Structure probing data (2A3 and DMS) for a 177-nucleotide construct. For 2A3, 907 sequencing reads were counted. It was measured as part of the RMDB library OK2TST. DMS adducts were read by reverse transcription with MarathonRT. For 2A3 the reverse transcriptase was SuperScript II with manganese. Conditions: 150 mM KOAc, 10 mM MgCl2 and 150 mM bicine (pH 8.5), 24 C.
RNA sequence: GGGAACGACUCGAGUAGAGUCGAAAAUCUUGGCUGGGCAAGGUGGUUCAUGCCUGUAAUCCCAGCACUUUGGAAGGCCAAGGUGGAAGGAUUGUUCAAGCCUAGGAGUUUGAGAGCAGCCUCAGCACCGACGUCUUAUAUUCGUAUAAGACGUCGGAAAAGAAACAACAACAACAAC
Reactivity to 2A3 in 0.01 (KOAc 150mM, MgCl2 10mM, bicine 150mM(pH8.5), 24C), signal-to-noise 2, nucleotides 027 to 126: u070c010u060u040g030g000c030u030g010g010g020c020a030a000g030g040u050g030g000u080u240c100a090u260g000c000c000u010g110u120a090a060u130c060c020c000a000g090c010a030c000u050u050u020g100g030a180a100g130g100c040c000a010a010g050g010u030g020g040a110a040g000g000a080u000u070g040u080u100c060a050a010g050c010c020u120a100g010g140a150g050u090u140u100g070a130g000a010g050c030a010g020c030c020u010c030a020g030c050a000
Reactivity to DMS in 0.01 (KOAc 150mM, MgCl2 10mM, bicine 150mM(pH8.5), 24C), signal-to-noise 2, nucleotides 027 to 126: u010c010u020u010g020g020c010u000g000g020g010c130a070a060g000g040u010g010g020u020u000c120a130u010g000c030c000u000g010u000a070a110u010c010c010c030a040g000c020a020c010u000u000u000g010g010a300a110g010g000c030c020a020a030g000g010u000g010g030a150a110g010g010a070u000u010g010u000u000c070a050a100g000c030c040u000a130g020g010a110g020u000u010u010g000a040g020a060g020c070a040g000c030c000u000c060a060g010c100a260